[RMDB]
RNA sequence: GGGAACGACUCGAGUAGAGUCGAAAACUUCCCAUUUGACUACCACAUUUUCUCCUAAUAGAGUUUAGUGGCUAUGCUUAUGGGAUAGAUGAAAAGUGCCAUGAUCUGAAGAGGGGGAGCUGUUCCGCUCCUUCGACCAGUUCGCUGGUCGAAGGAGAAAAGAAACAACAACAACAAC
Reactivity to 2A3 in 0.01 (KOAc 150mM, MgCl2 10mM, bicine 150mM(pH8.5), 24C), signal-to-noise 3, nucleotides 027 to 126: c010u010u000c000c000c000a020u020u020u020g040a030c000u000a020c000c010a050c030a090u000u000u110u000c010u000c010c010u160a130a090u160a210g020a000g050u080u120u070a040g000u010g020g030c030u240a190u210g020c000u020u030a000u000g000g040g010a050u190a160g090a040u200g100a000a020a030a060g020u040g040c010c000a060u110g000a060u000c100u150g020a070a040g050a030g100g070g000g000g020a000g060c020u010g050u030u040c020c010g020
Reactivity to DMS in 0.01 (KOAc 150mM, MgCl2 10mM, bicine 150mM(pH8.5), 24C), signal-to-noise 1, nucleotides 027 to 126: c050u000u000c000c010c000a020u000u000u000g000a090c010u000a080c010c000a050c080a190u000u000u000u000c010u000c010c060u010a090a150u030a130g000a040g020u000u010u000a070g000u000g020g010c300u020a030u000g030c000u000u000a010u010g000g000g000a020u020a080g000a080u000g000a070a070a040a050g020u020g050c030c020a070u000g020a050u000c040u020g000a080a120g000a180g020g000g020g000g000a010g010c020u030g000u000u000c010c030g000
Source information
Conditions: 150 mM KOAc, 10 mM MgCl2 and 150 mM bicine (pH 8.5), 24 C. An RNA of 177 nucleotides, treated with 2A3 and DMS and read out base by base. It was measured as part of the RMDB libraries RFM100 and RFMREP. The 2A3 profile rests on 1,002 reads. Reactivities are given for positions 27 through 126. DMS adducts were read by reverse transcription with MarathonRT. High 2A3 reactivity points to a flexible backbone, as in loops and unpaired stretches.